[RMDB]
RNA sequence: GGGAACGACUCGAGUAGAGUCGAAAACGGACGGGUGAGCGUGCAGGACGUGCGCGAAGUGAUGCGCCGGCGGAAGCUGCCGGAGAGCUACGCCAGCCAGUUCAUCGCAGCUGCCAGGGGGCCGCGCCUUGUUGCUGUAAUUCGUUACAGCAACAAGAAAAGAAACAACAACAACAAC
Reactivity to DMS in 0.01 (KOAc 150mM, MgCl2 10mM, bicine 150mM(pH8.5), 24C), signal-to-noise 7, nucleotides 027 to 126: c060g010g010a070c070g010g000g020u000g000a100g020c040g000u010g010c040a110g010g010a080c070g020u010g020c080g020c030g020a090a130g010u000g010a130u000g010c070g010c010c030g010g010c010g010g010a100a100g000c070u010g010c020c040g020g000a030g010a120g010c000u000a110c080g010c040c060a180g000c030c070a070g000u000u000c020a060u000c060g000c020a070g000c020u000g010c030c030a140g000g010g000g000g010c060c020g010c080g000c110
Reactivity to 2A3 in 0.01 (KOAc 150mM, MgCl2 10mM, bicine 150mM(pH8.5), 24C), signal-to-noise 5, nucleotides 027 to 126: c040g020g060a000c030g040g000g020u120g130a060g050c060g010u050g010c020a020g040g070a050c080g150u120g020c070g000c010g040a070a010g060u060g070a160u090g000c040g010c030c010g000g000c010g020g050a150a040g080c090u110g010c060c010g010g010a080g000a000g000c010u040a020c030g040c040c000a010g010c020c010a010g010u040u020c020a050u060c080g000c020a020g000c010u030g000c020c010a040g040g030g000g070g010c030c010g010c010g040c020